[RMDB]
RNA sequence: GGGAACGACUCGAGUAGAGUCGAAAAGUCUCCCAAGAAGAACCAGGAACACCCCAAGAAGAGGAGACUUCCCCAAGGGUAGGUGGAACGCCAGGGAACAAGGAAAUAGGAGAAGGAACGGUAGAAAUAAGAACCAAGUUCGCUUGGUUCAAAAGAAACAACAACAACAAC
Reactivity to 2A3 in 0.01 (KOAc 150mM, MgCl2 10mM, bicine 150mM(pH8.5), 24C), signal-to-noise 7, nucleotides 027 to 129: g020u000c010u000c020c000c000a020a000g060a020a000g020a050a060c070c040a030g040g020a010a030c030a100c050c020c010c020a020a050g090a030a000g050a030g020g000a000g010a020c000u030u050c010c000c010c000a030a060g000g010g040u050a050g000g050u060g030g060a040a030c050g040c020c010a030g010g010g030a020a020c010a040a030g030g020a000a040a030u150a050g010g010a030g010a060a020g040g030a020a040c050g020g010u040a030g120a050a120a010u200a090a030
Reactivity to DMS in 0.01 (KOAc 150mM, MgCl2 10mM, bicine 150mM(pH8.5), 24C), signal-to-noise 4, nucleotides 027 to 129: g010u010c050u020c000c000c000a140a100g050a040a050g030a050a040c050c050a040g000g030a050a060c130a140c020c000c010c000a120a100g030a070a070g030a080g040g000a070g000a000c080u000u040c030c020c020c090a140a090g020g000g040u000a050g000g000u020g010g040a080a070c090g020c140c040a080g000g050g040a040a050c030a040a080g040g030a010a020a030u040a070g040g010a050g040a010a010g000g000a030a040c040g020g050u010a050g030a070a090a090u000a050a180